[RMDB]
RNA sequence: GGGAACGACUCGAGUAGAGUCGAAAAGCAUACGUUACAUAUACUGCGUUCGUAUGCGGUAGGCAACGCAGUAUAUGUAAGCCUACCACCGUACGGUGGACAUGCGAAAGCAUGUCCAUCGUACGGAGCACGUAGAACCCUUCGGGGUUCUACGUGCAAAAGAAACAACAACAACAAC
Reactivity to 2A3 in 0.01 (KOAc 150mM, MgCl2 10mM, bicine 150mM(pH8.5), 24C), signal-to-noise 1, nucleotides 027 to 126: g050c020a090u110a140c070g120u000u000a010c000a000u000a000u010a010c000u020g010c000g010u020u090c110g030u140a070u180g130c050g020g080u130a110g000g110c010a000a000c010g000c000a000g000u010a000u000a000u000g000u010a000a000g000c000c030u060a080c000c040a020c000c000g000u000a000c000g000g000u000g000g000a010c000a010u010g000c000g050a040a010a010g000c000a000u000g000u000c000c000a000u000c000g000u000a000c000g000g000a010